An RNA of 207 nucleotides, treated with DMS and 2A3 and read out base by base. The DMS profile rests on 2,010 reads. Source: RMDB library OK3TST, as collected in RNAgym.
[RMDB]
RNA sequence: GGGAACGACUCGAGUAGAGUCGAAAACUUUGUGCAAUUCUUAGUCUCAUGCAUGAGUUGUUGACUUAAGUUGUUGACAGAUGGGACAAAGGGAGAAAAGUCAAACUGAGCAAUGGGUACUUUGGUGGGAUAAAGAGGAUUGGUCGGAGGAAUAAGACCAGUAUCUUCAGUUCGCUGAAGAUACUGGAAAAGAAACAACAACAACAAC
Reactivity to DMS in 0.01 (KOAc 150mM, MgCl2 10mM, bicine 150mM(pH8.5), 24C), signal-to-noise 1, nucleotides 027 to 156: c060u000u000u000g020u000g000c020a040a180u000u010c070u000u000a120g010u010c020u000c020a140u010g020c070a060u010g010a030g030u000u010g010u050u000g000a100c040u000u010a070a300g030u000u000g010u000u000g000a080c040a240g020a060u020g000g010g000a080c080a030a050a120g000g010g040a060g000a010a080a040a090g000u000c000a060a080a200c060u000g010a050g070c030a070a080u000g040g010g020u010a020c040u000u000u000g060g000u000g000g000g000a110u010a000a070a110g010a030g030g030a080u000u000g040g000u010c060g010g020a030g000g000a050a060u000a050a120g000a120
Reactivity to 2A3 in 0.01 (KOAc 150mM, MgCl2 10mM, bicine 150mM(pH8.5), 24C), signal-to-noise 4, nucleotides 027 to 156: c010u060u060u120g040u040g020c040a050a130u110u000c030u070u130a110g030u030c030u020c020a040u100g040c010a040u070g070a040g080u020u020g040u030u050g040a070c030u080u030a150a060g010u020u020g010u010u020g030a010c020a030g050a050u070g010g010g000a010c020a060a050a030g070g020g000a080g030a040a070a030a010g050u070c050a010a070a100c050u060g000a010g040c010a010a080u060g030g030g000u060a040c030u050u090u060g030g020u090g000g040g010a020u040a060a080a010g040a010g030g000a030u050u040g000g050u040c030g040g000a030g000g050a020a070u130a070a010g050a040